[RMDB]
RNA sequence: GGGAACGACUCGAGUAGAGUCGAAAAUCACCUUGAUAUGACAGCGUCACACGCUAGGCAAUACGACCGCUCCAUAUCUGCCGAAUGAUGCCAAUGUAUGGUGCCUACUGUCCAACGUAACCGUUAAGAUGAGUAUGGGGUUCGCCCCAUACUCAUCAAAAGAAACAACAACAACAAC
Reactivity to DMS in 0.01 (KOAc 150mM, MgCl2 10mM, bicine 150mM(pH8.5), 24C), signal-to-noise 1, nucleotides 027 to 126: u000c100a120c060c030u000u000g040a220u000a100u000g030a110c110a100g000c070g020u000c050a070c150a120c140g000c100u000a000g020g040c040a070a070u000a030c000g000a100c130c090g020c100u050c020c040a040u000a000u000c000u000g000c040c010g000a060a030u000g090a020u000g020c020c030a070a100u000g000u000a030u000g030g030u000g030c000c010u000a020c100u020g000u000c010c060a040a100c060g000u000a120a080c130c090g030u000u000a090a060
Reactivity to 2A3 in 0.01 (KOAc 150mM, MgCl2 10mM, bicine 150mM(pH8.5), 24C), signal-to-noise 1, nucleotides 027 to 126: u050c000a160c060c020u070u090g120a030u070a050u300g080a030c000a000g010c000g000u010c010a020c010a010c050g010c000u030a060g050g000c010a030a140u050a090c060g040a060c030c000g000c000u030c010c010a020u000a040u060c020u000g070c040c000g040a070a080u120g110a030u130g010c010c000a070a040u130g040u080a120u120g100g060u030g030c000c000u010a030c010u000g070u050c040c030a000a030c090g090u090a040a070c010c010g070u100u110a060a050
This 177-nucleotide RNA was probed chemically with DMS and 2A3. The RNA was probed in 150 mM KOAc, 10 mM MgCl2 and 150 mM bicine (pH 8.5) at 24 C. For DMS, 684 sequencing reads were counted. For 2A3 the reverse transcriptase was SuperScript II with manganese. High 2A3 reactivity points to a flexible backbone, as in loops and unpaired stretches. For 2A3, 928 sequencing reads were counted.